[RMDB]
RNA sequence: GGGAACGACUCGAGUAGAGUCGAAAACCUUGGUGGCCGCUCAGGUGUUCGGUUCUUCCGCAGUACGUCGCAGCUUCGAGUCCUGUAUCAGGAGCCUUCUCAAGCUUUGCCGCGCAUGGGAUUACUGAAGUAUUUAUGCGUUCGCGCAUAAAUACUUAAAAGAAACAACAACAACAAC
Reactivity to DMS in 0.01 (KOAc 150mM, MgCl2 10mM, bicine 150mM(pH8.5), 24C), signal-to-noise 6, nucleotides 027 to 126: c020c000u010u020g000g020u010g000g000c040c030g010c050u000c080a070g010g020u010g010u020u000c050g010g010u010u010c050u010u010c030c020g010c080a090g000u020a080c070g010u000c110g010c060a100g000c030u010u000c090g000a100g000u000c020c010u000g000u030a090u020c080a060g000g010a100g020c080c070u020u030c020u010c040a070a130g000c020u000u000u010g010c050c030g000c060g000c060a050u000g010g000g020a100u000u010a080c070u010g000
Reactivity to 2A3 in 0.01 (KOAc 150mM, MgCl2 10mM, bicine 150mM(pH8.5), 24C), signal-to-noise 5, nucleotides 027 to 126: c000c000u010u090g080g000u040g040g020c020c000g010c030u040c050a040g000g060u020g050u090u070c010g000g000u050u020c010u090u010c020c030g000c030a030g020u050a040c050g040u030c030g010c070a030g000c000u050u070c060g020a020g030u020c000c000u040g040u110a140u170c040a030g030g000a030g020c000c000u100u040c030u010c020a050a030g000c000u060u090u070g020c020c030g020c000g000c040a070u070g010g000g050a060u050u110a100c040u110g050
Source information
Conditions: 150 mM KOAc, 10 mM MgCl2 and 150 mM bicine (pH 8.5), 24 C. Structure probing data (DMS and 2A3) for a 177-nucleotide construct.